[RMDB]
RNA sequence: GGGAACGACUCGAGUAGAGUCGAAAAACGCUUCACAAUGUGCGGCAAAGAAACAUUGUUUAUGCAAAGGCACUUCGCAAUGUGUGCUCAAACAUUGCUUAUUCAAACACGCUUUACAAUGUGCGACAAAACUUCACGGUCUUCGGACCGUGAAGAAGGACGGGAGAUAGUUCGCUAUCUCCCGUCCAAAAGAAACAACAACAACAAC
Reactivity to 2A3 in 0.01 (KOAc 150mM, MgCl2 10mM, bicine 150mM(pH8.5), 24C), signal-to-noise 2, nucleotides 027 to 156: a010c000g010c000u020u010c010a010c000a000a030u000g010u000g000c010g080g040c220a110a060a080g090a000a090a000c000a000u010u010g100u080u160u100a090u110g100c110a070a100a040g190g000c000a000c060u020u020c000g000c000a000a050u040g000u010g040u000g000c140u090c140a070a070a000c010a000u000u000g010c010u090u050a060u100u100c090a000a170a050c030a030c080g030c060u080u040u160a080c050a080a130u190g060u040g030c000g040a050c110a010a110a040a020c000u000u000c000a000c000g000g050u000c000u040u070c170g100g010a000c000c000g000u000g000a000a000g000a000a000
Structure probing data (2A3) for a 207-nucleotide construct. Source: RMDB library M2RFPK, as collected in RNAgym. Conditions: 150 mM KOAc, 10 mM MgCl2 and 150 mM bicine (pH 8.5), 24 C.